[RMDB]
The record gives the reactivity of an RNA of 207 nucleotides to 2A3 and DMS. The data come from the RNA Mapping Database (RMDB), library OK3TST. For 2A3 the reverse transcriptase was SuperScript II with manganese.
RNA sequence: GGGAACGACUCGAGUAGAGUCGAAAAUGCUGUGGCCUGGGGCUGGUACUGUGAUUGUGAGGACCAUCAGCACUGAAAGAAUUGAGGAUGGGCGGUUCACCUGUUCAGAAGGCGAGGGGGAGAUGUCACACAGCCAAAUGCAGCAGAUGUCCUCCAAAUUAUCCUAGGUGUUCGCACCUAGGAUAAUAAAAGAAACAACAACAACAAC
Reactivity to 2A3 in 0.01 (KOAc 150mM, MgCl2 10mM, bicine 150mM(pH8.5), 24C), signal-to-noise 2, nucleotides 027 to 156: u070g000c020u000g020u050g040g010c010c020u070g000g000g060g010c030u030g000g020u080a070c060u040g040u030g040a050u130u060g040u060g060a050g040g030a050c030c000a050u020c040a020g050c040a030c050u120g050a090a110a080g040a070a120u140u100g010a030g050g010a010u030g020g000g000c010g020g030u090u030c040a070c010c030u050g060u120u110c030a020g040a150a000g060g000c060g040a090g020g000g010g000g000a050g010a050u070g040u060c000a020c000a000c000a110g010c000c020a020a060a040u110g010c010a010g000c020a010g000a050u060g030u000c000c000u010c010c000a040a190
Reactivity to DMS in 0.01 (KOAc 150mM, MgCl2 10mM, bicine 150mM(pH8.5), 24C), signal-to-noise 1, nucleotides 027 to 156: u020g000c000u000g020u000g010g000c060c000u020g010g000g020g040c020u000g000g000u000a050c060u010g040u030g010a100u020u020g010u010g020a120g040g000a060c030c030a080u000c020a050g010c050a050c120u000g010a140a100a160g000a070a120u000u010g000a110g040g010a080u000g000g020g050c060g030g030u010u010c040a090c000c010u010g030u000u000c090a180g010a130a130g000g020c050g000a100g030g010g000g020g000a110g010a080u000g020u000c000a060c020a040c020a080g000c000c050a030a030a140u010g020c040a020g000c040a060g000a060u010g000u000c000c000u010c000c000a020a110